[RMDB]
RNA sequence: GGGAACGACUCGAGUAGAGUCGAAAAUUGUUACAAGGCCGCCCACCUCCUCCCGGGCCGCUUUGUCCGACUGGCAGCACUCCUCCUCCCAAGUUGUCAGUCAUAAUCGAAAGCCCGGUGCACCUCCUAUCCUUCUGACAUUCGUGUCAGAAGGAUAAAAAGAAACAACAACAACAAC
Reactivity to DMS in 0.01 (KOAc 150mM, MgCl2 10mM, bicine 150mM(pH8.5), 24C), signal-to-noise 3, nucleotides 027 to 126: u020u000g020u010u000a070c070a060a100g010g020c040c090g000c030c060c010a140c080c030u020c020c000u010c070c060c020g010g020g020c030c180g020c080u010u000u010g010u020c150c140g000a010c020u000g000g000c020a000g060c020a090c140u000c030c040u000c040c050u010c000c020c010a090a100g010u000u000g020u030c030a040g030u000c000a030u010a060a060u010c100g000a110a100a110g020c030c010c020g000g040u000g000c140a100c010c010u000c020c050
Reactivity to 2A3 in 0.01 (KOAc 150mM, MgCl2 10mM, bicine 150mM(pH8.5), 24C), signal-to-noise 3, nucleotides 027 to 126: u070u060g070u080u030a040c030a060a060g050g000c020c020g010c000c010c010a030c010c000u050c020c000u040c020c020c020g000g010g000c020c010g010c050u020u030u040g040u030c030c040g000a010c000u010g000g000c010a000g000c000a010c070u080c020c010u030c000c030u040c030c010c000a030a020g030u010u000g020u000c010a000g000u020c000a030u100a060a110u140c070g070a110a030a010g020c010c010c000g010g010u030g010c010a050c000c000u020c000c000